[RMDB]
RNA sequence: GGGAACGACUCGAGUAGAGUCGAAAACUGGAGGCGUUCUGGACAGGGGUUCGAUUCCCCUCACCUCCACCCAAGGGCAUUCCGCUGAGUGUUUUUGGAUGGGGGUGUACUGGUCUCGACAGGGCGGAGCUUGCGACGUGUUCGCACGUCGCAAGCUAAAAGAAACAACAACAACAAC
Reactivity to DMS in 0.01 (KOAc 150mM, MgCl2 10mM, bicine 150mM(pH8.5), 24C), signal-to-noise 1, nucleotides 027 to 126: c040u010g000g010a010g000g000c000g000u010u000c000u000g050g010a130c030a020g080g030g000g000u000u010c050g000a300u070u000c000c000c000c120u010c000a000c000c000u000c000c000a000c070c000c000a010a000g060g030g000c040a000u000u000c000c300g020c180u010g000a040g000u020g000u000u000u000u020u020g020g010a020u000g000g000g010g040g000u000g000u000a050c000u000g020g000u000c030u000c030g010a080c110a180g000g000g000c050g000g000
Reactivity to 2A3 in 0.01 (KOAc 150mM, MgCl2 10mM, bicine 150mM(pH8.5), 24C), signal-to-noise 1, nucleotides 027 to 126: c010u000g080g000a000g060g020c000g030u010u010c020u060g040g000a060c030a010g000g010g000g000u000u080c010g010a000u010u020c000c010c000c010u010c000a000c010c000u000c000c000a000c000c000c000a000a000g050g000g000c000a030u000u010c030c070g140c300u300g000a020g000u000g020u020u020u000u000u000g020g000a020u010g000g000g000g000g000u000g000u000a000c040u000g000g010u030c020u060c080g030a030c000a050g010g000g030c100g030g030